[RMDB]
RNA sequence: GGGAACGACUCGAGUAGAGUCGAAAAAGGGGAUGCUAGGAGUCGGCGGCGACCGAAGCGAGGAGGAAAGCAAAGAAAGCAACGGGGCUAGCGAGUGGAUGUUCCGCCUCCCCGGAGUCCCGAGUGAAUAGGUUUAUGUUCGCAUAAACCAAAAGAAACAACAACAACAAC
Reactivity to 2A3 in 0.01 (KOAc 150mM, MgCl2 10mM, bicine 150mM(pH8.5), 24C), signal-to-noise 9, nucleotides 027 to 129: a000g040g000g000g010a030u090g030c040u060a030g020g010a030g040u070c040g030g020c020g020g020c040g050a080c030c010g030a050a010g030c050g020a020g010g010a000g000g030a060a020a000g020c050a030a040a050g070a050a090a000g030c020a030a060c020g000g000g030g000c000u040a050g110c010g040a050g030u210g040g020a050u080g080u150u050c030c020g030c010c010u010c000c000c000c010g010g000a010g010u000c000c000c000g000a050g030u170g030a060a120u120a190
Reactivity to DMS in 0.01 (KOAc 150mM, MgCl2 10mM, bicine 150mM(pH8.5), 24C), signal-to-noise 9, nucleotides 027 to 129: a040g020g010g010g020a030u010g010c060u020a080g000g000a070g010u030c060g020g000c070g020g000c100g020a080c050c040g000a080a070g000c140g030a030g010g010a060g000g010a040a030a060g010c200a070a060a080g010a050a090a100g020c050a060a110c020g040g000g020g010c060u020a070g020c050g020a030g040u040g000g000a050u000g000u010u020c040c020g000c110c070u000c000c010c050c030g040g000a050g010u030c010c000c000g000a090g000u000g000a060a090u020a120